RNA sequence: GGGAACGACUCGAGUAGAGUCGAAAAGAUCAGUGCGGAAUGGUUGGCCUACUUGCUGUUCGGUCUGCUCAUUCUGGUCAUCUUCCGGAUGAAGCACGCCACCAGGGCGCGGGGCCUGAUGUGGCUGCAUCGGGACGCUGUUCGCAGCGUCCCGAUGAAAAGAAACAACAACAACAAC
Reactivity to DMS in 0.01 (KOAc 150mM, MgCl2 10mM, bicine 150mM(pH8.5), 24C), signal-to-noise 1, nucleotides 027 to 126: g010a030u000c060a140g030u030g000c000g030g010a010a050u000g010g020u000u000g000g000c030c020u000a030c080u000u000g020c120u020g020u010u000c180g000g000u000c050u000g020c020u020c030a040u020u010c020u000g020g010u000c080a060u010c060u000u000c040c030g000g000a110u010g010a120a090g020c020a030c200g010c000c010a030c020c070a280g010g010g000c040g000c120g010g000g000g000c000c000u000g000a160u010g020u000g010g020c010u010g000
Reactivity to 2A3 in 0.01 (KOAc 150mM, MgCl2 10mM, bicine 150mM(pH8.5), 24C), signal-to-noise 1, nucleotides 027 to 126: g090a070u150c060a000g030u050g130c000g080g030a080a060u010g030g040u030u040g030g000c010c030u090a070c040u120u150g180c040u070g150u120u080c020g030g030u010c000u000g000c040u040c050a010u010u030c000u060g000g040u060c050a090u040c030u060u000c010c030g000g040a060u070g060a110a060g010c000a010c110g000c010c010a040c010c000a020g020g000g000c140g000c130g030g050g130g050c000c000u000g020a120u140g000u000g050g010c010u000g000

The record gives the reactivity of an RNA of 177 nucleotides to DMS and 2A3. For 2A3 the reverse transcriptase was SuperScript II with manganese. For DMS, 1,428 sequencing reads were counted. The RNA was probed in 150 mM KOAc, 10 mM MgCl2 and 150 mM bicine (pH 8.5) at 24 C. For 2A3, 1,027 sequencing reads were counted.